[RMDB]
RNA sequence: GGGAACGACUCGAGUAGAGUCGAAAAGCCUACGGUUAGAUGCUUGAAUUUCUUUGGUGGCAUUCUGUCGACACAUGGAAGAUUGAUUUUAGGUAAGAUGUAUCUCCAGCUAUUGAACGCGGGAAAGUUGUCUGAGAAUUUUCGAAUUCUCAGACAAAAAAGAAACAACAACAACAAC
Reactivity to 2A3 in 0.01 (KOAc 150mM, MgCl2 10mM, bicine 150mM(pH8.5), 24C), signal-to-noise 2, nucleotides 027 to 126: g060c010c010u030a070c100g000g030u070u050a040g000a050u040g000c010u040u100g030a140a170u140u060u080c020u030u100u110g050g000u020g020g030c010a010u060u020c010u080g050u050c040g120a000c010a010c010a120u050g130g000a040a100g050a160u020u120g000a060u060u060u130u110a050g010g000u030a020a080g040a100u140g040u120a100u000c000u000c010c000a020g000c020u050a050u150u150g070a000a000c060g000c000g070g000g080a030a020a010g030
Reactivity to DMS in 0.01 (KOAc 150mM, MgCl2 10mM, bicine 150mM(pH8.5), 24C), signal-to-noise 4, nucleotides 027 to 126: g000c000c000u000a060c180g000g010u000u010a050g010a100u000g000c060u000u000g010a120a100u000u010u010c030u000u000u010g040g030u000g000g000c030a040u030u000c060u000g010u020c050g010a080c110a070c120a050u010g000g020a080a060g000a100u000u010g000a070u010u000u010u010a070g000g020u010a050a080g010a060u010g020u010a050u010c040u000c040c030a060g000c040u000a150u040u020g000a070a060c130g000c030g000g000g000a060a100a080g010
An RNA of 177 nucleotides, treated with 2A3 and DMS and read out base by base. Values cover nucleotides 27 to 126. The RNA was probed in 150 mM KOAc, 10 mM MgCl2 and 150 mM bicine (pH 8.5) at 24 C. For 2A3 the reverse transcriptase was SuperScript II with manganese. For DMS the reverse transcriptase was MarathonRT. Source: RMDB libraries RFM100 and RFMREP, as collected in RNAgym.